[RMDB]
RNA sequence: GGGAACGACUCGAGUAGAGUCGAAAAAGAAGCCUCAAGCCCCAUUGCCUAUCUGGUUUUUGUCACUACACUCACUAGUGAUUAUACGAUUACAGUCUUUGUUACUGUCAACCUUGCAAAAGUUUGCCGCGUUACCUCUUCGGAGGUAACAAAAGAAACAACAACAACAAC
Reactivity to DMS in 0.01 (KOAc 150mM, MgCl2 10mM, bicine 150mM(pH8.5), 24C), signal-to-noise 9, nucleotides 027 to 129: a080g030a150a090g020c040c020u020c100a030a030g020c010c010c000c020a090u000u000g030c060c080u050a130u000c040u040g030g010u010u010u010u020u040g030u000c040a000c020u000a030c030a120c160u030c180a070c180u000a000g000u040g000a040u020u030a060u020a100c200g020a070u090u000a080c040a020g000u040c040u030u030u010g020u020u010a060c040u030g030u020c040a090a050c080c050u020u040g040c100a030a050a050a080g050u040u030u020g030c000c020g020c220
Reactivity to 2A3 in 0.01 (KOAc 150mM, MgCl2 10mM, bicine 150mM(pH8.5), 24C), signal-to-noise 9, nucleotides 027 to 129: a000g120a040a000g050c010c010u050c070a040a030g020c010c000c010c010a070u030u060g030c020c010u110a140u140c080u090g090g000u030u020u020u100u110g020u010c010a010c000u020a010c060a050c100u160c030a060c040u010a010g000u000g010a000u040u100a050u020a040c080g020a040u050u130a010c000a020g020u000c050u060u240u200g100u150u070a030c010u000g020u010c020a040a070c020c030u050u090g000c030a010a020a040a090g040u050u040u080g080c020c000g080c010